This 207-nucleotide RNA was probed chemically with 2A3. 2A3 adducts were read by reverse transcription with SuperScript II with manganese. High 2A3 reactivity points to a flexible backbone, as in loops and unpaired stretches. The 2A3 profile rests on 1,262 reads.
[RMDB]
RNA sequence: GGGAACGACUCGAGUAGAGUCGAAAAAGCCUAGUUCGCUAGGCUAAAAAGGGGUCGGACUCAUCUCUAGCGUGGCGCACACUGAAGCCUCCACGGUGUGAACUACGCUCGGGUGAGUUCCGACGGAGGCACCCAAAAAGCUCACUUCGGUGAGCAAUCUAGUAGCGUAGUUCGCUACGCUACUAGAAAAAGAAACAACAACAACAAC
Reactivity to 2A3 in 0.01 (KOAc 150mM, MgCl2 10mM, bicine 150mM(pH8.5), 24C), signal-to-noise 1, nucleotides 027 to 156: a000g000c000c000u010a000g000u020u040c150g040c130u000a010g000g000c000u020a080a010a000a000a000g080g000g030g000u000c000g000g010a010c000u020c000a050u030c200u020c090u130a030g020c000g010u030g010g030c090g010c030a010c000a010c000u090g080a160a060g090c020c050u030c070c030a050c000g000g010u000g000u000g010a020a020c000u010a000c020g000c040u000c020g000g010g000u010g000a000g000u060u020c000c000g000a000c000g000g000a000g010g020c010a080c000c000c000a100a070a080a030a030g010c010u010c020a000c020u090u250c300g100g000u010g000a000g000c010a000a010